An RNA of 207 nucleotides, treated with 2A3 and read out base by base. The RNA was probed in 150 mM KOAc, 10 mM MgCl2 and 150 mM bicine (pH 8.5) at 24 C. For 2A3 the reverse transcriptase was SuperScript II with manganese.

RNA sequence: GGGAACGACUCGAGUAGAGUCGAAAACGGUAGCAAUACCGACAGAGGUCAUAUACGUCAGUUAAGCCUUGGUGGUGUCACGACAUCCGGGUCGAAAAUCUAGUGAAUCGCCGUAGUGCAGCGUGUUCGUCCGCGUCGCUACGGUUAAAUCAAAUGACAAAUCCAUGCACUUCGGUGCAUGGAUUUGAAAAGAAACAACAACAACAAC
Reactivity to 2A3 in 0.01 (KOAc 150mM, MgCl2 10mM, bicine 150mM(pH8.5), 24C), signal-to-noise 1, nucleotides 027 to 156: c020g000g000u000a000g000c010a040a150u000a120c000c000g000a000c060a020g160a070g030g050u230c190a220u250a020u110a280c150g100u060c160a160g000u000u030a070a010g000c010c000u000u030g000g000u000g000g000u090g000u000c060a000c030g010a000c000a000u010c000c000g000g000g000u030c070g060a040a000a000a100u120c050u070a000g030u010g100a060a000u040c130g000c000c000g040u000a000g000u010g020c020a050g000c040g030u090g000u110u190c170g040u010c010c000g070c000g080u100c000g000c000u000a000c000g000g070u050u010a000a000a000u000c000a000a000a210u080g000a000
Reactivities are given for positions 27 through 156.